Structure probing data (2A3) for a 177-nucleotide construct. The reactions ran in a buffer of 150 mM KOAc, 10 mM MgCl2 and 150 mM bicine (pH 8.5), at 24 C.

[RMDB]
RNA sequence: GGGAACGACUCGAGUAGAGUCGAAAACUACCGGUCUACGGACCGGUAGAAUAAAUUCAGCGGUUUAAAUUAGCUCCGCAUAACCGCUGAUGCGGAGCUAAAACGGAUCCGAUACGUCGGAUCCGAAGGUAGCACUGCUGUUCGCAGCAGUGCUACCAAAAGAAACAACAACAACAAC
Reactivity to 2A3 in 0.01 (KOAc 150mM, MgCl2 10mM, bicine 150mM(pH8.5), 24C), signal-to-noise 1, nucleotides 027 to 126: c000u000a010c000c030g000g000u090c110u090a300c300g080g000a000c000c000g000g000u020a000g000a000a000u010a000a000a020u130u000c100a070g050c030g010g010u080u130u110a080a110a070u130u020a070g000c000u000c010c000g040c000a000u170a000a060c040c030g000c150u080g030a000u030g000c000g000g000a000g020c000u000a010a010a010a010c030g000g000a000u000c000c000g000a030u030a170c300g060u000c000g000g000a000u000c030c000g000a030a000
For 2A3, 528 sequencing reads were counted. The data come from the RNA Mapping Database (RMDB), library OK1LIB.